An RNA of 177 nucleotides, treated with 2A3 and DMS and read out base by base.
DMS adducts were read by reverse transcription with MarathonRT.
The data come from the RNA Mapping Database (RMDB), library TTRDEL.
[RMDB]
RNA sequence: GGGAACGACUCGAGUAGAGUCGAAAAGAUAUGGAUAACGAUGAAAUGCUUGACAUCGAUCUCGGAAACGAGGGAGUCACGCAUGGAGUUAUCCUAAGUCAAACCCCCAGACUUCGGUCUGGGGGAACUCUCCUUGUUUCUUCGGAAACAAGGAGAGAAAAGAAACAACAACAACAAC
Reactivity to 2A3 in 0.01 (KOAc 150mM, MgCl2 10mM, bicine 150mM(pH8.5), 24C), signal-to-noise 2, nucleotides 027 to 126: g050a000u080a030u120g000g000a000u000a000a010c050g300a300u050g020a070a020a030u020g020c010u000u020g000a010c030a300u200c100g150a210u070c010u010c000g000g060a150a050a040c010g010a000g010g050g000a010g000u000c010a010c060g000c020a010u000g020g020a010g000u000u020a000u010c000c000u020a080a010g050u010c040a050a010a300c030c000c020c000c000a010g000a000c010u090u230c300g110g030u000c000u000g020g050g020g000g000a000a000
Reactivity to DMS in 0.01 (KOAc 150mM, MgCl2 10mM, bicine 150mM(pH8.5), 24C), signal-to-noise 1, nucleotides 027 to 126: g000a000u000a300u020g010g000a000u000a000a000c000g000a180u040g000a230a140a010u000g000c000u010u000g000a010c000a250u010c130g010a070u010c000u000c000g000g000a100a060a160c000g030a030g030g000g010a000g010u000c000a000c100g000c040a010u000g000g000a090g000u000u000a010u000c000c000u000a040a060g030u010c040a090a140a240c030c000c000c000c000a000g020a010c000u000u010c210g050g000u000c000u000g000g000g020g010g000a000a010